[RMDB]
RNA sequence: GGGAACGACUCGAGUAGAGUCGAAAAUAAGUAACUUGCCCAGGGUCGCAUAGCUGGUGAGUAGCCAAGCUGAGAUUCCAUCAUAUAGUCUGGUAACAAAGUCCAUGUUUUCUUUCCUCUACUCACUGAACAGGAACUGGCUGGCUGUGACAAAAUACUAUACGCACUCAUUCGUGAGUGCGUAUAGAAAAGAAACAACAACAACAAC
Reactivity to 2A3 in 0.01 (KOAc 150mM, MgCl2 10mM, bicine 150mM(pH8.5), 24C), signal-to-noise 2, nucleotides 027 to 156: u160a030a000g150u060a070a160c020u050u110g010c030c000c000a030g070g000g030u080c020g000c070a040u130a170g010c020u050g020g010u050g050a080g040u130a010g030c070c070a100a010g030c020u050g030a050g000a080u170u120c040c010a040u050c040a030u150a010u030a150g090u020c070u030g060g000u060a070a040c120a210a090a010g020u000c020c010a080u010g090u010u030u050u030c020u020u050u030c000c010u010c050u100a060c000u020c050a060c070u130g100a080a020c000a050g040g000a050a030c000u010g000g020c000u010g000g030c040u070g060u060g070a010c010a010a110a000a020u180a050
Reactivity to DMS in 0.01 (KOAc 150mM, MgCl2 10mM, bicine 150mM(pH8.5), 24C), signal-to-noise 1, nucleotides 027 to 156: u000a090a150g000u020a060a070c050u010u020g000c020c000c030a170g050g000g000u000c010g030c040a130u000a070g010c020u010g020g050u000g010a140g020u000a180g010c050c040a030a100g080c040u000g020a090g010a160u000u000c060c020a110u000c060a150u010a100u000a070g020u000c000u000g000g000u000a010a130c030a090a110a150g000u000c030c060a080u010g020u000u000u030u000c020u010u000u010c030c020u000c070u030a040c030u010c000a060c110u000g000a030a040c060a120g000g020a040a080c050u000g020g040c000u020g030g070c020u030g020u000g020a160c060a100a060a050a060u010a140